About this RNA:
Structure probing data (DMS and 2A3) for a 177-nucleotide construct. For 2A3 the reverse transcriptase was SuperScript II with manganese. DMS adducts were read by reverse transcription with MarathonRT.

RNA sequence: GGGAACGACUCGAGUAGAGUCGAAAAGCAAUAUUAUUGCUACACGUCUAAGGACACUUUAGAUGAUAUCUUACAACAGGCUAAUAAGUCUGUUGGUAUUAUAUCUAUGCCUUUGGGAUAUGUGUCUCAUACUUGGUCUGUUCGCAGACCAAGUAUGAAAAGAAACAACAACAACAAC
Reactivity to DMS in 0.01 (KOAc 150mM, MgCl2 10mM, bicine 150mM(pH8.5), 24C), signal-to-noise 1, nucleotides 027 to 126: g000c010a020a010u000a140u010u010a110u000u000g010c020u000a080c050a030c090g030u000c020u010a060a030g010g000a010c030a010c190u000u010u000a050g010a080u000g010a030u000a000u000c030u000u000a040c020a030a000c000a010g000g010c000u000a110a090u000a090a010g050u000c000u000g000u010u000g000g010u010a000u000u000a030u000a000u010c010u030a110u010g010c020c020u000u010u000g020g000g010a040u000a030u000g000u000g000u000c040u000
Reactivity to 2A3 in 0.01 (KOAc 150mM, MgCl2 10mM, bicine 150mM(pH8.5), 24C), signal-to-noise 4, nucleotides 027 to 126: g020c020a020a020u120a080u300u050a060u030u120g000c000u020a020c030a010c060g020u000c010u030a020a030g020g020a020c000a020c070u030u040u070a030g010a030u060g010a000u020a010u020c020u030u020a000c000a000a000c000a000g020g000c010u030a110a110u100a300a030g000u000c000u000g010u010u000g010g010u010a010u010u010a000u000a000u010c030u020a080u100g090c010c000u040u080u140g110g000g000a020u030a020u150g010u010g010u000c000u000
The reactions ran in a buffer of 150 mM KOAc, 10 mM MgCl2 and 150 mM bicine (pH 8.5), at 24 C.
Values are in units of 0.01, from 0 to 300, in steps of 10.